[RMDB]
RNA sequence: GGGAACGACUCGAGUAGAGUCGAAAAGAUAUGGACGGUGGACUGCAACAGCCAUGAAUUCGGAAACGAAUUAUGGACAUGCAGCACCGUCCUAAGUCAAACCCCCAGCUGUUCGCAGCUGGGGGAAGUGCGUAUACACGUUCGCGUGUAUACGCACAAAAGAAACAACAACAACAAC
Reactivity to 2A3 in 0.01 (KOAc 150mM, MgCl2 10mM, bicine 150mM(pH8.5), 24C), signal-to-noise 3, nucleotides 027 to 126: g000a000u010a000u060g010g000a000c010g000g010u030g030g300a220c020u020g000c240a300a110c080a300g000c010c000a000u110g260a010a090u020u020c000g030g000a000a010a000c010g000a000a000u030u010a000u030g010g020a070c130a300u300g000c010a000g010c000a000c000c000g000u000c000c000u000a000a000g010u030c010a030a020a090c000c010c000c010c010a010g000c000u050g050u120u190c300g030c240a000g010c000u000g000g000g000g000g000a010a050
Reactivity to DMS in 0.01 (KOAc 150mM, MgCl2 10mM, bicine 150mM(pH8.5), 24C), signal-to-noise 1, nucleotides 027 to 126: g000a020u000a080u000g000g010a030c000g000g050u000g000g030a190c020u000g020c000a220a140c300a170g000c030c000a000u000g010a010a040u010u000c000g000g000a010a000a030c000g000a050a000u000u000a020u000g000g010a030c050a090u030g050c010a050g020c000a000c000c000g000u000c000c000u000a000a080g000u000c000a080a120a230c010c000c000c000c010a020g000c000u000g030u000u030c250g000c000a030g030c000u000g010g010g010g000g030a000a000